Chemical mapping of a 177-nucleotide RNA with 2A3 and DMS. For DMS the reverse transcriptase was MarathonRT.

RNA sequence: GGGAACGACUCGAGUAGAGUCGAAAAACGGUGAGUCGCGUGCGCGACUUCAGAAGAAGGACGACGUCACCGCACGGCGUCCCCAACUCCUGCGAACGCGUUUGUUGCUCUCACUCGGAAAGAGCUGCGGUAUACUGAGCUUCGGCUCAGUAUACCGAAAAGAAACAACAACAACAAC
Reactivity to 2A3 in 0.01 (KOAc 150mM, MgCl2 10mM, bicine 150mM(pH8.5), 24C), signal-to-noise 2, nucleotides 027 to 126: a010c030g030g000u000g020a020g000u110c070g060c010g080u070g030c040g000c010g110a130c000u080u020c040a040g010a050a010g070a030a020g000g000a010c000g000a010c000g000u000c010a080c300c030g040c050a020c000g000g040c010g000u030c000c020c000c000a080a260c000u020c010c020u090g000c070g050a080a010c000g000c000g020u040u070u110g170u150u170g000c000u000c000u010c020a010c010u140c010g050g100a090a060a040g100a050g000c090u130g050
Reactivity to DMS in 0.01 (KOAc 150mM, MgCl2 10mM, bicine 150mM(pH8.5), 24C), signal-to-noise 2, nucleotides 027 to 126: a090c040g000g000u010g030a050g000u000c180g000c010g000u000g000c150g000c020g000a160c120u000u000c000a010g000a080a070g020a230a130g000g000a030c140g000a010c020g020u000c020a210c230c160g040c100a000c070g000g000c010g000u020c000c010c090c070a200a140c030u000c010c040u000g000c120g000a010a070c060g050c010g000u000u000u030g040u010u040g030c090u000c000u030c050a120c000u050c090g000g060a100a070a020g000a050g000c050u000g000